[RMDB]
RNA sequence: GGGAACGACUCGAGUAGAGUCGAAAAGGAACGGGCUAGGGGGUAGUAGUAACGUCCUGAGACGAAUGUGGAGAGGGAAACUGAUUAUCUCUACCUUGGUAGAUACGGGAGAAUCAAUUCCGCAAGCCUCGACAGUACAUUUCGAUGUACUGUCGAGAAAAGAAACAACAACAACAAC
Reactivity to DMS in 0.01 (KOAc 150mM, MgCl2 10mM, bicine 150mM(pH8.5), 24C), signal-to-noise 3, nucleotides 027 to 126: g020g010a090a090c080g010g040g000c100u030a070g020g040g000g000g010u000a060g010u000a060g000u030a080a180c040g000u000c010c080u010g000a130g010a040c080g000a090a080u000g010u010g010g020a150g020a150g010g000g000a020a060a090c170u000g000a030u000u000a110u010c070u000c000u010a030c040c050u000u020g020g010u000a040g010a070u020a050c150g000g000g010a030g000a020a040u000c060a030a150u000u000c010c020g000c140a050a150g010c160
Reactivity to 2A3 in 0.01 (KOAc 150mM, MgCl2 10mM, bicine 150mM(pH8.5), 24C), signal-to-noise 2, nucleotides 027 to 126: g040g020a080a000c080g030g000g020c090u140a080g030g020g000g090g020u010a050g010u010a010g010u030a090a020c010g070u000c010c040u170g070a130g040a130c020g030a100a040u120g060u110g080g000a080g020a060g090g050g020a000a050a010c050u050g030a070u040u130a100u100c050u020c000u020a020c000c030u050u140g130g000u070a020g010a070u090a120c100g020g000g020a040g040a010a030u080c030a050a090u060u000c010c010g020c040a020a020g020c040